[RMDB]
RNA sequence: GGGAACGACUCGAGUAGAGUCGAAAAACUACAAAGAAUUAGGUUUAGUCAUGAAUAUGGAUGUUAGUCUCCAUAGACAUAGGCUCUCUCUUAAGGAGUUGAUGAUGUAUGCCGCUGAUCCAGCCAUUAACAUGUUCCUUCGGGAACAUGAAAAGAAACAACAACAACAAC
Reactivity to 2A3 in 0.01 (KOAc 150mM, MgCl2 10mM, bicine 150mM(pH8.5), 24C), signal-to-noise 5, nucleotides 027 to 129: a020c060u200a030c130a070a140a040g160a080a110u230u150a040g050g010u110u060u070a020g010u010c010a020u040g030a060a050u040a000u010g000g020a020u070g110u240u130a080g050u080c010u000c000c000a000u000a010g020a030c010a000u070a080g020g000c000u000c010u010c000u020c000u060u090a100a060g060g020a050g030u070u030g090a100u050g010a020u040g030u130a040u150g030c020c010g000c100u000g000a020u010c020c030a000g060c000c010a080u100u080a060a050
Reactivity to DMS in 0.01 (KOAc 150mM, MgCl2 10mM, bicine 150mM(pH8.5), 24C), signal-to-noise 5, nucleotides 027 to 129: a040c030u000a090c150a130a110a120g000a140a110u070u050a000g000g030u000u020u040a020g000u030c050a030u050g000a060a190u020a000u030g000g000a080u040g030u030u020a120g000u050c040u070c000c000a030u000a000g020a240c030a050u040a120g000g000c030u020c050u020c040u020c060u010u060a060a080g000g000a050g030u010u010g020a060u040g020a070u030g000u010a050u000g020c060c090g000c020u020g020a070u050c020c060a110g050c050c060a060u010u050a050a150

Chemical mapping of a 170-nucleotide RNA with 2A3 and DMS. For 2A3, 6,421 sequencing reads were counted. Source: RMDB library 15KLIB, as collected in RNAgym. Conditions: 150 mM KOAc, 10 mM MgCl2 and 150 mM bicine (pH 8.5), 24 C. Values cover nucleotides 27 to 129.